[RMDB]
RNA sequence: GGGAACGACUCGAGUAGAGUCGAAAACUCUGACUUCAAUGCUGACAAGUUCAAGUCGCCGGUAAAUAAGGAGGAGCCAAAAGCUUUCUCCCUGGUCAUGGAUGAAACAGAGUCACUUCUAGAUCUCCUAUAUAUUGACCAACCGGCACAGUACUCCUCAAUGAUUUGAAUUCGUUCAAAUCAUUGAAAAAGAAACAACAACAACAAC
Reactivity to 2A3 in 0.01 (KOAc 150mM, MgCl2 10mM, bicine 150mM(pH8.5), 24C), signal-to-noise 8, nucleotides 027 to 156: c020u020c040u030g050a040c010u040u050c110a100a140u170g040c060u100g080a090c050a130a070g020u060u080c040a050a050g020u070c060g010c000c010g010g020u110a110a100a100u130a150a100g010g000a000g000g000a010g010c010c020a050a050a020a020g000c030u020u210u120c010u010c000c000c010u010g000g000u000c010a030u050g000g030a060u200g020a100a060a050c020a010g030a000g090u110c050a060c090u090u030c020u040a060g000a070u020c010u010c000c020u020a030u020a040u010a030u270u090g000a000c000c000a000a020c000c010g020g000c010a000c000a000g010u030a040c020u030c010c010
Reactivity to DMS in 0.01 (KOAc 150mM, MgCl2 10mM, bicine 150mM(pH8.5), 24C), signal-to-noise 4, nucleotides 027 to 156: c050u000c020u010g010a100c030u010u000c040a140a160u000g010c050u010g000a270c140a070a120g010u000u010c040a050a130g020u000c070g040c010c040g030g030u000a040a060a150u000a180a070g000g010a050g030g010a050g040c020c030a080a070a090a270g000c000u010u000u010c000u010c000c010c020u000g030g040u000c010a080u000g020g020a080u000g020a100a050a200c140a090g010a080g000u000c190a090c190u010u000c020u010a080g000a220u000c010u000c000c010u010a130u000a120u000a110u020u000g000a050c010c010a180a130c010c010g030g030c030a030c040a050g010u000a090c040u000c030c060